Background:
Chemical mapping of a 177-nucleotide RNA with 2A3 and DMS. The data come from the RNA Mapping Database (RMDB), library RFMREP. For DMS, 3,557 sequencing reads were counted. The reactions ran in a buffer of 150 mM KOAc, 10 mM MgCl2 and 150 mM bicine (pH 8.5), at 24 C. For 2A3, 1,489 sequencing reads were counted.
[RMDB]
RNA sequence: GGGAACGACUCGAGUAGAGUCGAAAAUUGAGCGAUGUGUAUAGACAGUAACCCGGUAAAAUGUACUGAAAAUAGGGAUAAGAGUUGAACAGGUGCAAAGUGAAUAAGUAAAUUGUGAAAGUUCAGGCUUGUCUUCUAAGUUCGCUUAGAAGACAAGAAAAGAAACAACAACAACAAC
Reactivity to 2A3 in 0.01 (KOAc 150mM, MgCl2 10mM, bicine 150mM(pH8.5), 24C), signal-to-noise 2, nucleotides 027 to 126: u070u090g020a030g040c050g020a010u030g060u000g040u080a050u040a170g000a040c030a010g030u030a040a060c000c000c010g010g010u050a050a050a030a030u090g030u050a030c030u030g070a100a000a040a080u190a090g000g010g000a020u060a050a090g010a000g080u000u110g000a030a020c020a070g080g000u060g050c010a040a040a000g080u080g090a080a030u070a100a010g040u070a020a050a150u150u170g050u020g090a080a040a010g020u020u030c010a000g090g040
Reactivity to DMS in 0.01 (KOAc 150mM, MgCl2 10mM, bicine 150mM(pH8.5), 24C), signal-to-noise 4, nucleotides 027 to 126: u010u010g000a070g000c040g010a060u000g020u000g020u010a040u000a090g010a100c040a070g000u000a070a160c050c000c020g010g010u000a040a060a080a080u010g000u000a030c050u010g000a070a040a060a090u010a070g010g000g000a100u000a040a060g000a060g020u000u000g010a040a080c060a050g010g020u010g010c050a030a040a110g010u000g010a040a040u010a040a070g000u000a040a050a170u010u020g010u000g000a080a090a160g000u000u000c030a050g010g000